Record summary
Source: RMDB library OK2TRN, as collected in RNAgym. Structure probing data (2A3 and DMS) for a 177-nucleotide construct. The DMS profile rests on 946 reads. 2A3 adducts were read by reverse transcription with SuperScript II with manganese. Reactivities are rounded to 0.1 and cut off at 0 and 3. Values cover nucleotides 27 to 126. The 2A3 profile rests on 1,378 reads.
[RMDB]
RNA sequence: GGGAACGACUCGAGUAGAGUCGAAAAGAGUACGAUCAUGCAGUACGACUGAUCUCAUGCAGUACCACAUGUAGCACGGAUCCAGGUACGCUGUGUGAUCACUAGUAUGAUCGCUAGGCUCAUGGUAGCCCCCUACCUAGUUCGCUAGGUAGGGGGCAAAAGAAACAACAACAACAAC
Reactivity to 2A3 in 0.01 (KOAc 150mM, MgCl2 10mM, bicine 150mM(pH8.5), 24C), signal-to-noise 2, nucleotides 027 to 126: g000a020g000u090a060c100g000a010u020c000a010u030g000c040a010g040u110a060c130g080a070c100u000g000a000u000c080u030c030a050u060g050c020a030g160u150a070c000c070a110c070a300u220g110u160a030g000c050a020c080g020g000a030u000c110c120a020g040g000u080a000c060g000c030u010g000u010g000u040g040a000u010c030a010c000u000a000g040u000a060u190g100a180u160c100g000c030u010a030g060g110c010u000c030a030u050g120g000u070a020
Reactivity to DMS in 0.01 (KOAc 150mM, MgCl2 10mM, bicine 150mM(pH8.5), 24C), signal-to-noise 2, nucleotides 027 to 126: g030a100g020u030a120c100g000a040u000c020a010u010g000c030a060g020u020a100c000g020a190c120u000g020a060u000c000u030c030a030u010g040c040a120g000u000a020c070c070a170c170a040u010g030u030a060g030c020a040c170g000g000a030u000c070c110a030g000g000u000a120c080g000c030u030g000u000g040u020g000a010u000c010a280c000u000a030g000u000a100u000g000a030u000c120g030c120u000a000g010g020c060u000c010a080u010g000g020u000a150